[RMDB]
RNA sequence: GGGAACGACUCGAGUAGAGUCGAAAAGUGUUGACAGGGAUGCUAGAAGACACUUUCUUCAUGGAGUGUAUUGGCAUUCUAGGUUAGCAUGUAGGAGCGGAAGAGGGCGACUGUAUUGCGUAGCGAGCCCAAAAAGAUCAUUCGUGAUCUUUUUGGGAAAAGAAACAACAACAACAAC
Reactivity to DMS in 0.01 (KOAc 150mM, MgCl2 10mM, bicine 150mM(pH8.5), 24C), signal-to-noise 9, nucleotides 027 to 126: g020u000g010u000u000g010a020c020a220g010g000g000a010u000g000c000u010a040g010a090a080g000a030c010a000c000u010u000u030c050u020u040c300a150u030g010g000a000g010u000g000u000a050u010u010g000g000c000a000u000u000c000u000a060g010g000u000u000a010g010c000a010u000g010u010a100g010g000a090g010c060g000g000a050a050g010a100g000g010g010c050g000a080c070u000g000u000a070u010u010g010c070g010u010a070g010c080g000a140g010
Reactivity to 2A3 in 0.01 (KOAc 150mM, MgCl2 10mM, bicine 150mM(pH8.5), 24C), signal-to-noise 9, nucleotides 027 to 126: g010u010g010u020u020g010a020c010a030g000g010g020a000u000g000c000u030a040g070a240a030g070a100c000a000c000u060u100u130c060u200u160c110a220u300g020g000a010g000u010g000u030a050u070u130g010g000c000a000u000u000c000u010a020g070g050u010u010a000g000c010a010u040g030u070a050g010g080a070g020c070g010g030a080a030g010a070g020g020g000c020g030a030c020u020g030u090a100u080u140g030c040g010u010a020g030c020g040a030g010

Conditions: 150 mM KOAc, 10 mM MgCl2 and 150 mM bicine (pH 8.5), 24 C. This 177-nucleotide RNA was probed chemically with DMS and 2A3.